[RMDB]
RNA sequence: GGGAACGACUCGAGUAGAGUCGAAAAGUGUAGCGUCACUUUGAUGGCGGUACUAUGAAUUGAUGCAAGGUGUGGAGCGACCUUAAACAGUUCUGGUGGUGCUCUGAAUGGAGUGGUCUACUGAGAUUUAACUUAUGCACGUUCGCGUGCAUAAGAAUCUAGGUGCGAUGUUCGCAUCGCACCUAGAAAAAGAAACAACAACAACAAC
Reactivity to 2A3 in 0.01 (KOAc 150mM, MgCl2 10mM, bicine 150mM(pH8.5), 24C), signal-to-noise 1, nucleotides 027 to 156: g140u120g020u030a040g080c030g040u060c020a070c070u170u090u150g250a300u060g020g000c070g000g080u020a000c010u010a100u110g080a050a020u070u120g030a090u050g120c080a060a000g000g030u020g030u130g080g020a020g040c000g070a050c010c000u090u180a150a050a000c030a010g000u020u000c020u030g000g000u000g000g130u010g000c020u020c020u110g110a060a060u170g010g000a000g050u020g000g040u070c060u010a030c020u000g080a030g070a170u090u080u060a070a000c000u000u000a000u000g000c000a000c000g020u080u020c120g000c020g180u000g000c000a000u000a000a000g020a000a020
Annotation: Source: RMDB library M2RFPK, as collected in RNAgym. An RNA of 207 nucleotides, treated with 2A3 and read out base by base. The reactions ran in a buffer of 150 mM KOAc, 10 mM MgCl2 and 150 mM bicine (pH 8.5), at 24 C. The 2A3 profile rests on 472 reads. For 2A3 the reverse transcriptase was SuperScript II with manganese.